The record gives the reactivity of an RNA of 177 nucleotides to DMS and 2A3.
It was measured as part of the RMDB library OK1LIB.
The 2A3 profile rests on 1,942 reads.
DMS adducts were read by reverse transcription with MarathonRT.
Conditions: 150 mM KOAc, 10 mM MgCl2 and 150 mM bicine (pH 8.5), 24 C.
[RMDB]
RNA sequence: GGGAACGACUCGAGUAGAGUCGAAAAUACGCUGGUAGCAGCAAGUAGCAGCUCGAUCCGCAGAUGAGCGGAAUAUACAAAUGAAAAUGGAUCUCGAUAGAGUUGCUACAAUCGAGACCAUUAGAGACGUAUCGAUCCGAUUCGUCGGAUCGAUACGAAAAGAAACAACAACAACAAC
Reactivity to DMS in 0.01 (KOAc 150mM, MgCl2 10mM, bicine 150mM(pH8.5), 24C), signal-to-noise 1, nucleotides 027 to 126: u010a160c230g000c000u070g000g000u030a010g000c000a000g000c050a040a110g010u000a000g000c000a000g000c000u000c000g000a120u000c000c000g010c000a130g040a220u030g000a180g000c000g000g000a010a100u040a080u010a050c140a070a040a010u200g050a040a110a050a020u000g030g040a300u000c000u030c010g070a040u050a130g000a000g000u000u000g000c000u000a050c010a070a110u000c000g000a000g000a070c020c020a020u020u000a080g140a180g000a300
Reactivity to 2A3 in 0.01 (KOAc 150mM, MgCl2 10mM, bicine 150mM(pH8.5), 24C), signal-to-noise 3, nucleotides 027 to 126: u270a020c040g000c030u000g030g100u250a130g190c020a000g000c010a030a110g000u010a000g000c010a000g000c010u030c000g090a050u020c000c010g000c020a040g110a300u140g170a000g000c000g000g040a000a000u120a020u080a030c110a000a050a110u230g090a210a020a000a020u040g000g100a180u020c000u000c000g060a050u150a120g010a040g000u040u000g000c050u020a020c050a040a030u050c000g000a000g000a000c000c000a020u000u000a030g040a040g000a040